Structure probing data (2A3 and DMS) for a 177-nucleotide construct. The DMS profile rests on 1,412 reads. It was measured as part of the RMDB library M2PK90. The RNA was probed in 150 mM KOAc, 10 mM MgCl2 and 150 mM bicine (pH 8.5) at 24 C. 2A3 adducts were read by reverse transcription with SuperScript II with manganese.
RNA sequence: GGGAACGACUCGAGUAGAGUCGAAAAGUAAAUAAACGGCAGCUAUAAGGUGGUGCCGAACAAGCGUGACCUACCAACACGCAAGGAGCAGUCUGGUAUGACUGCAAAGGAAAGGAAAACAAAAAAACUAUGAUCAUGUCUUCGGACAUGAUCAUAGAAAAGAAACAACAACAACAAC
Reactivity to 2A3 in 0.01 (KOAc 150mM, MgCl2 10mM, bicine 150mM(pH8.5), 24C), signal-to-noise 2, nucleotides 027 to 126: g040u010a000a050a150u070a070a190a010c000g010g010c010a020g030c020u080a070u060a300a070g110g040u060g050g080u040g000c000c010g020a030a040c060a080a010g000c020g000u020g030a260c010c030u070a050c010c030a030a010c000a000c020g020c010a010a050g080g010a080g000c000a000g010u000c000u140g100g120u270a070u230g000a000c010u000g040c000a040a030a010g020g020a040a050a010g070g040a070a070a020a050c050a030a140a000a010a010a000a000
Reactivity to DMS in 0.01 (KOAc 150mM, MgCl2 10mM, bicine 150mM(pH8.5), 24C), signal-to-noise 2, nucleotides 027 to 126: g050u000a070a060a080u010a080a060a100c010g000g010c000a090g000c000u010a130u000a120a180g010g030u000g010g000u000g030c000c010g020a090a100c110a090a190g020c000g000u000g000a040c040c020u010a070c020c000a250a030c000a010c000g040c020a130a090g060g000a180g010c000a010g000u000c000u000g010g010u000a090u000g010a010c000u000g020c000a040a050a150g000g010a050a090a050g030g000a030a030a040a030c070a020a010a120a150a090a060a110